Notes: The record gives the reactivity of an RNA of 207 nucleotides to DMS and 2A3. For DMS, 5,027 sequencing reads were counted. The data come from the RNA Mapping Database (RMDB), library ARCHII. Conditions: 150 mM KOAc, 10 mM MgCl2 and 150 mM bicine (pH 8.5), 24 C.
[RMDB]
RNA sequence: GGGAACGACUCGAGUAGAGUCGAAAAGGCAACUGGCAGUUAAACCGUGUAGUACCGAUGGAGGUUGGAAACAAUGCACAUCACUACCGGGUCUUGGGCAGUGCGAUAGCGAUGGGAUUCACCUUCGCAGGAUGUGCAUGGAAGUAUAAACACAACGGGAAUAUCCAUUGUUCGCAAUGGAUAUUCCAAAAGAAACAACAACAACAAC
Reactivity to DMS in 0.01 (KOAc 150mM, MgCl2 10mM, bicine 150mM(pH8.5), 24C), signal-to-noise 2, nucleotides 027 to 156: g020g030c020a040a100c000u020g000g020c020a080g020u000u000a070a060a090c030c040g010u000g040u020a100g030u000a060c050c010g000a080u000g020g030a060g000g050u000u000g000g000a190a140a140c030a090a040u010g020c020a040c010a040u000c010a250c000u000a050c030c020g020g000g010u000c030u000u010g030g000g030c000a050g030u000g000c000g000a110u000a040g000c020g000a040u000g050g020g010a280u010u010c040a070c050c020u000u010c020g030c000a080g000g010a060u000g020u000g010c010a030u010g010g010a050a100g000u000a120u000a080a090a110c060a080c080a090a100c110g010
Reactivity to 2A3 in 0.01 (KOAc 150mM, MgCl2 10mM, bicine 150mM(pH8.5), 24C), signal-to-noise 3, nucleotides 027 to 156: g020g000c020a040a030c110u040g000g010c000a030g050u140u150a110a070a030c010c040g050u060g030u090a040g020u000a040c030c070g010a020u030g020g030a100g040g040u060u030g030g060a070a050a020c070a090a020u040g060c020a000c000a030u010c010a000c120u050a010c020c030g080g000g000u020c010u090u100g010g000g020c010a040g010u050g040c050g020a040u110a050g020c030g040a040u030g030g020g040a080u140u130c040a060c050c000u020u030c010g000c000a000g070g010a010u040g000u000g020c000a000u040g010g030a050a050g030u090a060u170a270a170a010c090a010c030a090a100c060g040